[RMDB]
RNA sequence: GGGAACGACUCGAGUAGAGUCGAAAAUUAGGUAAAAUAGACUGAAGAAAGAGGCUUCUAUCUUCAUCUGGUAUGAAGAGCUAUGUUUGAUAUGCAUUGGCACAAUCUCAGUAUGGUUAGAAGCUACUGGUGAGAGCAUACUAGACAAUAUAAAGCACUAGCUAAUUAGUUUCGACUAAUUAGCUAGAAAAGAAACAACAACAACAAC
Reactivity to DMS in 0.01 (KOAc 150mM, MgCl2 10mM, bicine 150mM(pH8.5), 24C), signal-to-noise 3, nucleotides 027 to 156: u010u010a080g030g010u000a060a070a080a120u000a080g000a120c060u000g010a120a090g010a050a090a120g000a230g020g030c020u010u000c030u000a060u010c020u020u000c030a050u000c030u010g020g030u000a050u010g000a030a070g010a150g030c020u010a050u000g010u000u000u000g000a140u000a090u000g010c030a160u000u010g090g010c040a080c060a100a130u000c040u010c010a060g000u010a050u000g020g000u010u000a100g010a080a170g030c020u000a030c060u010g010g020u000g000a090g010a110g040c010a030u000a050c040u000a060g020a070c040a040a060u000a080u000a040a050a080g020c050a160
Reactivity to 2A3 in 0.01 (KOAc 150mM, MgCl2 10mM, bicine 150mM(pH8.5), 24C), signal-to-noise 6, nucleotides 027 to 156: u090u030a020g020g010u060a020a020a060a090u070a060g060a080c050u040g040a070a010g030a040a140a030g100a060g050g000c010u050u000c020u020a050u020c010u100u040c020a040u000c030u060g060g060u170a060u160g040a040a040g020a010g030c020u040a020u030g050u020u090u080g150a120u080a030u230g010c010a030u040u150g030g000c010a020c040a070a060u010c020u010c020a030g020u080a050u050g020g010u030u020a020g010a040a000g000c010u020a020c020u030g040g000u060g020a040g000a000g010c010a010u020a090c010u030a030g040a060c030a020a050u120a030u080a170a050a010g050c060a010
This 207-nucleotide RNA was probed chemically with DMS and 2A3. Conditions: 150 mM KOAc, 10 mM MgCl2 and 150 mM bicine (pH 8.5), 24 C. 2A3 adducts were read by reverse transcription with SuperScript II with manganese. Values cover nucleotides 27 to 156.